[RMDB]
RNA sequence: GGGAACGACUCGAGUAGAGUCGAAAAAGUGCAUCUGAUGCCAUUGAUGCUGGUGGCCGGUGAUCACGCCAUCAAUGACAUGGCUUCUGACGAGCCGGAUUCAUGGCGUUCACAACUGGAAGCUGCGUGUCCCGUAGUCUUUCGAGACUACGGGACAAAAAGAAACAACAACAACAAC
Reactivity to 2A3 in 0.01 (KOAc 150mM, MgCl2 10mM, bicine 150mM(pH8.5), 24C), signal-to-noise 1, nucleotides 027 to 126: a000g100u050g010c020a040u000c030u160g050a120u130g060c020c010a030u020u090g000a000u060g050c100u090g000g030u000g040g010c010c030g100g000u040g000a050u150c050a010c040g000c010c000a020u070c070a000a080u080g050a080c060a110u120g000g000c000u030u050c120u140g120a080c080g010a010g000c000c000g020g010a060u030u050c000a000u000g000g000c010g020u050u100c050a060c020a110a130c050u080g000g060a050a010g030c060u030g000c030g030
Reactivity to DMS in 0.01 (KOAc 150mM, MgCl2 10mM, bicine 150mM(pH8.5), 24C), signal-to-noise 2, nucleotides 027 to 126: a070g030u010g050c010a040u000c030u020g020a100u000g030c070c060a070u000u000g010a070u000g010c080u010g010g020u000g010g030c040c090g000g010u000g000a110u000c170a030c070g010c050c000a000u000c160a040a030u000g010a130c160a120u020g020g000c010u000u000c060u000g030a110c200g000a070g020c010c000g000g000a100u000u000c180a020u000g020g000c000g000u010u010c070a030c070a140a050c120u000g010g000a110a050g000c030u010g010c130g020